[RMDB]
RNA sequence: GGGAACGACUCGAGUAGAGUCGAAAAAUCAGUAAGCGGAGGAAAAGAAACUAACAAGGAUUCCGUCAGUAACGGCGAGUGAAGACGGAGUAGCCCAAGGUUCAAUCCUGGAUCUCUUCGAGGUCAGCCUAGACGUAUUAUUCGUAAUACGUCUAGGAAAAGAAACAACAACAACAAC
Reactivity to DMS in 0.01 (KOAc 150mM, MgCl2 10mM, bicine 150mM(pH8.5), 24C), signal-to-noise 9, nucleotides 027 to 126: a080u020c060a070g010u010a060a080g010c100g010g010a080g010g000a040a030a080a090g000a070a040a040c050u010a080a100c220a140a120g000g000a100u020u000c000c000g010u000c010a040g000u060a120a030c030g000g050c220g010a220g000u000g000a150a110g000a030c010g000g000a040g010u010a080g000c040c010c040a070a060g000g000u000u010c070a070a130u010c020c020u000g010g000a040u000c010u000c020u010u010c160g010a050g000g000u000c030a140g010
Reactivity to 2A3 in 0.01 (KOAc 150mM, MgCl2 10mM, bicine 150mM(pH8.5), 24C), signal-to-noise 9, nucleotides 027 to 126: a000u090c040a020g100u110a110a020g070c060g040g060a030g040g040a020a050a010a070g070a050a060a020c040u080a050a050c080a110a050g030g000a020u060u000c000c000g000u000c010a010g040u040a020a010c010g160g040c220g090a050g030u020g020a050a020g070a010c000g000g000a000g000u020a030g020c000c010c020a050a040g030g000u040u070c020a030a040u030c030c010u050g070g010a040u010c020u000c020u090u160c130g020a020g010g030u020c010a010g040
The record gives the reactivity of an RNA of 177 nucleotides to DMS and 2A3.
High 2A3 reactivity points to a flexible backbone, as in loops and unpaired stretches.
Reactivities are rounded to 0.1 and cut off at 0 and 3.
2A3 adducts were read by reverse transcription with SuperScript II with manganese.
High DMS reactivity at an A or C suggests that its Watson-Crick edge is free.
It was measured as part of the RMDB libraries RFM100 and RFMREP.